[RMDB]
Overview: The record gives the reactivity of an RNA of 207 nucleotides to DMS and 2A3. The RNA was probed in 150 mM KOAc, 10 mM MgCl2 and 150 mM bicine (pH 8.5) at 24 C. For 2A3, 2,336 sequencing reads were counted. DMS adducts were read by reverse transcription with MarathonRT. Values are in units of 0.01, from 0 to 300, in steps of 10. For DMS, 5,985 sequencing reads were counted.
RNA sequence: GGGAACGACUCGAGUAGAGUCGAAAAUGAAUGCAAAGGAAAAGUUCAUGAAGGAAAUGAAAAGUGCUACUCCAGUGAACACACAAAUGAUAAGAAGGCAAAACAGCCUUAUUGCUGAUAUGGAGGAGAAAGUUUGAGUGUCCUGGCUAGAAGAUCCAGACCCAAAUAGAUUCGUCUAUUUGGGUCUAAAAGAAACAACAACAACAAC
Reactivity to DMS in 0.01 (KOAc 150mM, MgCl2 10mM, bicine 150mM(pH8.5), 24C), signal-to-noise 3, nucleotides 027 to 156: u010g010a100a070u000g020c020a050a070a070g010g000a070a070a090a170g040u000u010c010a070u000g010a070a060g000g000a070a080a080u000g000a080a060a070a090g020u000g020c040u000a070c040u010c020c030a060g040u000g010a050a070c020a080c040a160c040a050a030a080u010g000a160u000a020a110g030a090a070g020g010c030a040a050a060a160c120a120g020c010c040u000u000a040u000u000g020c010u000g010a070u000a070u000g000g010a070g000g000a100g010a070a060a090g030u000u010u000g000a040g010u000g000u010c040c030u010g020g020c070u000a080g020a050a050g020a140u010c060c060
Reactivity to 2A3 in 0.01 (KOAc 150mM, MgCl2 10mM, bicine 150mM(pH8.5), 24C), signal-to-noise 3, nucleotides 027 to 156: u080g030a010a030u060g020c050a020a040a120g030g050a070a070a030a020g010u030u060c030a020u100g030a090a010g050g010a050a090a040u080g020a090a070a040a010g060u070g000c020u020a040c010u030c010c000a000g020u010g150a150a000c020a000c000a010c010a050a020a110u090g010a010u050a080a040g050a010a010g010g000c000a030a090a220a000c030a060g000c000c000u020u040a080u080u080g010c020u010g020a080u030a100u160g030g010a010g020g010a010g050a010a100a010g030u050u060u050g030a030g010u040g010u020c000c000u000g010g000c010u050a030g000a060a010g000a070u030c010c020